[RMDB]
RNA sequence: GGGAACGACUCGAGUAGAGUCGAAAAAUUGCUUUGGGUAUGGUCAAAACAUCGAGGAAAAGGAUGAUCCGCAGCGAAACCCUCUUGUUGUACAAAAGUGGGUGGCGUUCACAGACUAAACGGCGAUGGGUUCCAGAAAUUCGAAACCUGGGCUUAACAUCCCUAAGAACUUCGGUUCUUAGGGAUGAAAAGAAACAACAACAACAAC
Reactivity to 2A3 in 0.01 (KOAc 150mM, MgCl2 10mM, bicine 150mM(pH8.5), 24C), signal-to-noise 2, nucleotides 027 to 156: a030u140u050g020c030u090u000u050g030g000g000u080a110u070g030g000u120c120a050a070a030a040c040a050u040c030g050a010g030g100a030a020a020a020g030g010a020u030g010a020u070c030c040g040c100a010g020c030g030a060a050a030c010c020c010u020c010u010u010g060u010u110g060u050a070c070a130a110a030a060g010u070g000g000g000u010g030g030c000g040u070u060c040a060c020a080g050a070c020u110a080a180a030c020g020g010c030g040a060u040g010g040g000u100u100c010c000a020g040a050a150a110u220u150c070g020a090a020a000c010c000u030g000g000g050c000u000u000a010a000
Reactivity to DMS in 0.01 (KOAc 150mM, MgCl2 10mM, bicine 150mM(pH8.5), 24C), signal-to-noise 1, nucleotides 027 to 156: a070u000u010g010c030u000u000u000g010g020g000u000a070u000g000g010u000c080a060a050a080a060c000a050u000c000g050a140g020g000a040a090a130a130g010g010a050u000g010a070u000c040c010g010c110a130g010c040g020a100a050a050c010c010c010u010c050u000u000g010u000u000g000u020a220c060a070a060a060a070g000u010g000g040g040u000g010g020c020g000u080u020c040a080c070a110g000a100c080u000a020a100a090c070g000g000c040g020a130u000g010g000g070u000u000c000c050a120g000a040a060a190u000u000c060g010a060a050a050c020c040u000g040g010g010c020u000u000a040a250
An RNA of 207 nucleotides, treated with 2A3 and DMS and read out base by base. Source: RMDB library RSTRND, as collected in RNAgym. The reactions ran in a buffer of 150 mM KOAc, 10 mM MgCl2 and 150 mM bicine (pH 8.5), at 24 C. Values cover nucleotides 27 to 156. DMS adducts were read by reverse transcription with MarathonRT. For 2A3 the reverse transcriptase was SuperScript II with manganese.